[RMDB]
RNA sequence: GGGAACGACUCGAGUAGAGUCGAAAAAGCCUGGUCGUUACGUCGACCAGGCAAUGCCGCCACAACGGCUUCCUGGCGUGGCGGAUCUCAUCCAAUGGAGCAACGCUCCGGAUACGUCCGGAGCGAAAAAAGCUCUGCUUCUUCGGAAGCAGAGCAAGAUUUAGGAGAAGUUCGCUUCUCCUAAAUCAAAAGAAACAACAACAACAAC
Reactivity to 2A3 in 0.01 (KOAc 150mM, MgCl2 10mM, bicine 150mM(pH8.5), 24C), signal-to-noise 2, nucleotides 027 to 156: a010g300c000c000u020g000g000u020c000g040u070u150a190c110g020u010c010g130a000c000c000a000g000g000c000a000a000u020g000c000c000g000c000c010a030c010a060a010c010g050g010c050u130u100c010c010u010g030g000c010g010u000g000g000c050g010g000a020u060c040u050c040a090u110c060c080a130a180u220g010g010a020g000c020a040a060c020g000c000u020c000c040g000g000a040u040a010c150g050u020c030c030g000g000a000g010c000g000a020a000a000a000a000a000g010c000u000c000u000g010c000u010u010c010u020u040c060g070g000a000a000g000c000a000g000a000g000c010a000a000

This 207-nucleotide RNA was probed chemically with 2A3. The reactions ran in a buffer of 150 mM KOAc, 10 mM MgCl2 and 150 mM bicine (pH 8.5), at 24 C.